[RMDB]
RNA sequence: GGGAACGACUCGAGUAGAGUCGAAAAGCUGUUGCCUGGUAUCGAGCUUGUUACGAGUGUGCUCAAUCCACGAGAGAAGUUCGGAAGCUUUCAUUUGCUUGGAUUGCAUAUGACGUCAUUGCCAAAAGGACGUCCUAGUAUUCGUACUAGGACGUCCAAAAGAAACAACAACAACAAC
Reactivity to DMS in 0.01 (KOAc 150mM, MgCl2 10mM, bicine 150mM(pH8.5), 24C), signal-to-noise 2, nucleotides 027 to 126: g010c060u020g000u000u020g010c020c010u010g010g000u000a090u010c080g020a060g000c030u000u000g020u010u010a080c060g010a280g030u010g010u000g000c070u010c110a050a030u000c060c020a030c050g010a110g000a070g010a060a060g020u030u000c070g030g020a140a090g000c030u000u000u000c080a110u000u010u000g000c100u000u000g000g020a090u000u000g000c040a030u010a060u000g010a100c200g000u010c030a000u000u010g000c040c080a100a060a080a110
Reactivity to 2A3 in 0.01 (KOAc 150mM, MgCl2 10mM, bicine 150mM(pH8.5), 24C), signal-to-noise 2, nucleotides 027 to 126: g010c040u060g050u230u080g050c000c000u060g040g050u070a060u140c030g010a020g010c040u070u050g070u040u100a080c000g000a050g060u100g030u030g000c030u040c060a020a030u060c000c030a040c030g020a030g010a010g000a080a070g020u140u030c160g100g050a080a050g020c000u000u160u040c010a100u020u030u130g060c010u010u070g100g030a040u100u100g000c020a010u040a060u180g080a040c020g040u030c000a050u030u170g050c030c000a030a030a040a020